[RMDB]
RNA sequence: GGGAACGACUCGAGUAGAGUCGAAAACAAUUUUCAACUUUUCACCUUCCCUUGAAACUUGAAUUUUCCUACAAUCAUACUACCUCCUAUAAAAUCCAAUCCUCUACUUUACCAAUCCGAAAAUAAAGUAACGGAAGAUAUUCGUAUCUUCCGUUACAAAAGAAACAACAACAACAAC
Reactivity to DMS in 0.01 (KOAc 150mM, MgCl2 10mM, bicine 150mM(pH8.5), 24C), signal-to-noise 2, nucleotides 027 to 126: c050a070a030u000u000u000u000c010a010a070c110u000u000u000u000c080a140c110c030u000u000c010c000c000u010u000g000a040a030a060c230u000u000g010a080a060u020u010u010u000c000c000u000a030c120a070a070u000c040a020u000a070c010u000a100c040c010u000c000c030u000a120u000a030a060a100a100u000c040c080a020a060u000c010c040u000c000u010a090c010u000u000u000a090c080c030a100a100u010c010c020g000a050a060a090a070u000a040a110a140
Reactivity to 2A3 in 0.01 (KOAc 150mM, MgCl2 10mM, bicine 150mM(pH8.5), 24C), signal-to-noise 1, nucleotides 027 to 126: c020a010a040u070u040u070u120c030a020a050c060u050u000u080u100c050a050c020c000u010u020c000c000c000u000u010g050a030a030a050c020u040u050g020a040a060u000u020u110u020c020c000u010a060c060a120a120u070c010a060u030a110c020u010a070c060c000u010c000c010u150a110u050a170a140a000a000u030c040c010a010a000u020c000c000u070c000u000a060c000u020u040u030a060c010c050a010a070u140c020c000g090a100a040a050a080u090a010a100a000